The record gives the reactivity of an RNA of 207 nucleotides to 2A3. It was measured as part of the RMDB library OK3TST.
[RMDB]
RNA sequence: GGGAACGACUCGAGUAGAGUCGAAAAGAGCUGGGCUGAAGCAAACAGCCAGUGCCAGACACAGUCUGUACCUUUCUGGCGGAGGGUCGAUCAUCUAUUAAUAAGGCAGGAUCUCUCUUAAAAUCUUUAAUGUAUUGGCUUAGAGAUAAAAGGGUCCGCUGGGAGAUAAAUUCGUUUAUCUCCCAGCAAAAGAAACAACAACAACAAC
Reactivity to 2A3 in 0.01 (KOAc 150mM, MgCl2 10mM, bicine 150mM(pH8.5), 24C), signal-to-noise 2, nucleotides 027 to 156: g030a010g030c040u030g010g120g000c000u010g060a130a040g050c050a090a090a140c000a010g000c010c000a000g020u040g070c000c000a010g010a010c040a030c030a200g040u010c040u020g010u120a060c000c000u020u110u060c030u020g020g000c000g000g060a000g030g030g020u120c030g040a050u030c020a030u020c070u120a130u080u070a150a160u080a080a050g070g000c020a000g060g050a000u080c080u000c010u000c050u120u180a040a090a050a140u040c040u030u120u050a060a060u090g040u070a100u200u090g030g000c040u010u050a010g000a000g020a060u120a090a100a010a070g080g010g000u030c000c150